[RMDB]
RNA sequence: GGGAACGACUCGAGUAGAGUCGAAAAGAGUAAGGGAACGACUCGAGUAGAGUCGAAAAGGCUGACCAGCUAUGAGGUCAUACCUUGUCAUAGCAAGAUGGCAGAAGUGAGACUGCCACACACAGAAGGAUAGUAUACGUUUCGACGUAUACUAUCCAAAAGAAACAACAACAACAAC
Reactivity to DMS in 0.01 (KOAc 150mM, MgCl2 10mM, bicine 150mM(pH8.5), 24C), signal-to-noise 4, nucleotides 027 to 126: g020a080g010u010a110a110g000g000g000a070a110c000g010a000c000u000c000g000a060g000u020a060g010a010g000u010c010g000a000a020a100a070g000g020c220u000g000a000c020c000a190g020c020u000a010u000g020a030g000g000u000c000a070u010a140c100c040u010u040g000u040c000a040u010a030g020c000a250a180g010a160u000g020g000c000a010g000a130a070g000u060g020a150g020a130c030u010g000c000c010a040c070a150c190a090c180a150g020a090a140
Reactivity to 2A3 in 0.01 (KOAc 150mM, MgCl2 10mM, bicine 150mM(pH8.5), 24C), signal-to-noise 6, nucleotides 027 to 126: g080a000g070u150a030a110g030g020g020a020a010c000g000a000c000u010c010g000a010g020u080a000g020a010g000u010c000g000a000a000a000a000g130g000c090u030g000a010c000c000a000g000c000u000a000u000g010a000g010g000u010c030a020u180a190c010c040u090u210g020u010c000a000u000a000g000c010a000a040g070a070u030g000g000c010a000g010a180a040g170u110g090a080g060a080c000u000g000c000c010a000c000a000c000a000c000a010g190a130a050

The data come from the RNA Mapping Database (RMDB), library OK1LIB. This 177-nucleotide RNA was probed chemically with DMS and 2A3. The reactions ran in a buffer of 150 mM KOAc, 10 mM MgCl2 and 150 mM bicine (pH 8.5), at 24 C. Values cover nucleotides 27 to 126. For 2A3, 8,269 sequencing reads were counted. For DMS the reverse transcriptase was MarathonRT. For DMS, 7,038 sequencing reads were counted.